[RMDB]
RNA sequence: GGGAACGACUCGAGUAGAGUCGAAAAGCAAACUAAUAUGCAUAGUCCUGAUGUUAUAGUAGGUGACUAUGUCAUUAUUAGUGAAAAAUUGUUUGUGCGUAGUAAGGAAGAAGACGGAUUUGCCUUCGGUUUAAAGCAAGUUCGCUUGCUUUAAACCAAAAGAAACAACAACAACAAC
Reactivity to 2A3 in 0.01 (KOAc 150mM, MgCl2 10mM, bicine 150mM(pH8.5), 24C), signal-to-noise 1, nucleotides 027 to 126: g000c000a040a100a000c000u010a000a010u020a000u060g010c000a000u020a000g010u010c000c000u060g030a110u120g120u220u250a190u100a150g060u020a040g000g080u120g020a010c000u000a000u000g000u060c030a010u030u080a000u000u000a000g000u070g060a000a000a000a000a040u080u030g040u050u040u110g070u080g030c030g010u010a040g020u020a080a050g030g040a010a040g010a030a000g010a020c030g020g010a100u000u010u180g050c020c000u070u050c030
Reactivity to DMS in 0.01 (KOAc 150mM, MgCl2 10mM, bicine 150mM(pH8.5), 24C), signal-to-noise 2, nucleotides 027 to 126: g020c070a090a130a070c000u000a020a000u000a020u000g000c010a010u000a000g020u000c000c020u000g000a170u020g020u010u030a100u000a210g000u010a130g000g000u000g030a010c000u000a000u000g000u000c020a000u010u010a000u010u000a000g010u020g010a030a090a060a110a120u000u000g020u000u000u000g020u000g010c070g020u020a050g020u010a030a070g010g010a040a110g010a020a070g000a060c060g000g010a090u000u010u010g040c040c050u000u010c100